[RMDB]
RNA sequence: GGGAACGACUCGAGUAGAGUCGAAAACAAUUGAUAGCGAUGCCUCUUCUCCACCUUUAGUAAGCAAUGAUACAAGUGUGUAAUCUUCAGUGGAUUCACCUUUUUUCAUCAUGUUAUAAAAGCGUGAUCUUCUUACCACGUUCGCGUGGUAAGAAGAAAAAGAAACAACAACAACAAC
Reactivity to 2A3 in 0.01 (KOAc 150mM, MgCl2 10mM, bicine 150mM(pH8.5), 24C), signal-to-noise 3, nucleotides 027 to 126: c030a060a110u060u120g110a090u140a060g000c060g020a020u050g020c010c010u080c040u060u030c030u030c010c000a040c010c010u040u060u040a030g010u020a020a030g060c040a070a090u070g010a000u030a050c070a050a030g020u030g000u010g000u290a070a000u030c030u080u080c080a180g060u110g200g000a000u030u010c020a020c010c000u010u130u020u020u000u020c010a020u010c010a010u040g050u060u050a160u040a110a060a020a000g040c050g040u020g040a040
Reactivity to DMS in 0.01 (KOAc 150mM, MgCl2 10mM, bicine 150mM(pH8.5), 24C), signal-to-noise 2, nucleotides 027 to 126: c080a160a090u010u010g030a070u000a090g020c070g000a110u000g020c050c050u000c030u000u000c010u010c060c020a030c070c040u010u000u000a120g010u000a050a100g020c040a050a060u000g000a040u000a040c230a010a010g010u000g020u020g000u020a010a010u000c000u000u030c200a120g000u010g000g010a050u010u000c010a000c000c000u000u000u000u000u000u000c090a030u010c090a050u000g010u000u000a160u010a050a050a050a050g000c110g000u000g000a120